[RMDB]
RNA sequence: GGGAACGACUCGAGUAGAGUCGAAAAGUACGUAGAGUGUCGGCAAGCUCUAUAUAUGGACACUUACGAAGGGUUUUGGUUGUUUUGUAUCUCAAGCGGACUUUGAGUAUUUGAGGAAAAUACGACAUGAAUCCUGUGACGUUCGCGUCACAGGAAACGUACUUAUUCCCUUCGGGGAAUAAGUACGAAAAGAAACAACAACAACAAC
Reactivity to 2A3 in 0.01 (KOAc 150mM, MgCl2 10mM, bicine 150mM(pH8.5), 24C), signal-to-noise 1, nucleotides 027 to 156: g070u130a020c000g000u070a010g030a090g130u060g020u040c030g060g060c020a040a040g080c030u040c140u070a120u050a040u070a020u260g110g000a030c070a010c010u020u030a050c110g020a030a030g130g040g060u010u030u070u150g070g000u000u020g000u030u050u060u050g020u000a030u000c040u000c020a020a020g000c020g030g030a010c080u050u040u050g050a060g090u030a050u000u050u110g050a010g010g070a020a000a130a090u170a060c050g050a010c000a050u170g060a000a070u000c000c010u030g000u000g020a020c000g020u030u020c170g000c000g040u010c000a000c000a010g000g000a000a000a010
Reactivity to DMS in 0.01 (KOAc 150mM, MgCl2 10mM, bicine 150mM(pH8.5), 24C), signal-to-noise 1, nucleotides 027 to 156: g030u000a020c020g030u020a040g030a040g030u010g000u000c090g000g000c100a080a300g000c000u020c020u000a090u000a060u000a080u000g010g000a160c070a010c050u000u000a150c070g040a150a070g010g040g060u000u010u010u000g010g030u010u000g020u000u010u010u000g030u020a070u010c030u000c020a070a070g030c040g040g020a080c020u000u010u010g000a150g020u010a030u010u000u000g030a150g030g020a100a020a070a100u000a070c000g000a140c070a090u010g020a080a140u010c000c030u000g020u000g000a010c020g040u000u010c300g040c020g030u020c000a020c010a010g010g000a020a020a020